[RMDB]
Chemical mapping of a 170-nucleotide RNA with DMS and 2A3. Conditions: 150 mM KOAc, 10 mM MgCl2 and 150 mM bicine (pH 8.5), 24 C. Values cover nucleotides 27 to 129. The data come from the RNA Mapping Database (RMDB), library 15KLIB.
RNA sequence: GGGAACGACUCGAGUAGAGUCGAAAAAGUUGCUCAGUUGGUUAGUUACCUUUCUGAACGCUGUAAUGUUAUUGCUGAUUCUAAGUCCUUCACACUUAUCUUUGGUGGCGUAGCUUACGCCUACUUUACGGAGCUCCGUUCGCGGAGCUCAAAAGAAACAACAACAACAAC
Reactivity to DMS in 0.01 (KOAc 150mM, MgCl2 10mM, bicine 150mM(pH8.5), 24C), signal-to-noise 2, nucleotides 027 to 129: a070g010u000u050g110c000u020c070a120g050u000u070g040g040u030u010a160g000u010u050a030c020c050u020u010u040c000u010g010a030a100c080g000c030u040g010u040a030a080u020g000u020u020a100u030u010g020c050u050g070a000u060u010c050u000a120a220g010u000c100c010u090u000c010a100c110a140c000u020u000a120u020c090u000u000u000g000g050u010g030g030c030g020u000a050g060c230u060u060a040c030g000c070c020u060a000c080u030u050u020a100c190g030
Reactivity to 2A3 in 0.01 (KOAc 150mM, MgCl2 10mM, bicine 150mM(pH8.5), 24C), signal-to-noise 2, nucleotides 027 to 129: a000g090u060u010g000c010u030c010a000g010u000u000g070g000u000u000a080g000u130u060a020c000c000u000u070u060c000u000g020a040a040c070g000c060u120g040u050a190a000u000g050u130u140a220u090u300g000c070u080g060a230u080u000c000u000a000a020g030u030c010c010u100u140c010a000c000a000c060u050u050a100u200c000u050u030u140g080g000u030g060g000c000g040u000a010g040c080u100u110a030c050g000c000c000u110a020c050u010u020u030a080c090g000